[RMDB]
RNA sequence: GGGAACGACUCGAGUAGAGUCGAAAAACUCUCACCAGUUAAGGUACUGUAACUGAUCCUCGAGGAGUAGUGUCCGUGACUCAGGACACGAGUCACUCUAGUACUGAACUAGAAGUACUCCUGGAGUACAGUACCGUACUCCAGCGAGCGUGGGAGACCACGUAGUAGGUUUCGACCUACUACGUGGAAAAGAAACAACAACAACAAC
Reactivity to 2A3 in 0.01 (KOAc 150mM, MgCl2 10mM, bicine 150mM(pH8.5), 24C), signal-to-noise 4, nucleotides 027 to 156: a000c010u000c010u010c000a000c000c010a040g000u080u090a080a050g030g000u000a000c010u030g080u130a280a160c040u040g050a260u060c030c020u020c040g140a000g020g000a000g010u070a010g030u000g060u010c030c030g030u050g060a050c030u030c130a070g050g050a040c010a020c030g010a020g000u030c020a010c030u000c010u000a000g000u010a090c090u180g170a150a010c000u000a000g020a060a030g090u040a010c000u000c020c000u040g080g000a000g000u000a000c000a010g010u020a000c000c000g010u000a000c010u020c040c030a040g020c020g110a050g070c090g020u000g000g000g000a000g010a010
Reactivity to DMS in 0.01 (KOAc 150mM, MgCl2 10mM, bicine 150mM(pH8.5), 24C), signal-to-noise 3, nucleotides 027 to 156: a110c020u000c010u000c000a070c030c030a180g010u000u000a060a020g000g000u000a010c010u000g040u010a040a140c060u000g010a110u000c070c000u000c030g030a070g000g000a090g020u000a040g000u020g000u000c020c060g030u010g020a090c080u000c040a250g020g010a130c080a060c040g010a050g010u000c050a080c030u000c000u000a010g020u000a270c150u000g010a180a020c010u010a010g010a070a150g020u000a040c000u000c000c010u000g020g000a060g010u000a060c000a020g000u000a010c030c020g010u000a000c010u000c020c030a090g020c040g000a090g070c070g010u000g000g010g010a070g020a230
Chemical mapping of a 207-nucleotide RNA with 2A3 and DMS. The reactions ran in a buffer of 150 mM KOAc, 10 mM MgCl2 and 150 mM bicine (pH 8.5), at 24 C. 2A3 adducts were read by reverse transcription with SuperScript II with manganese. The 2A3 profile rests on 2,520 reads.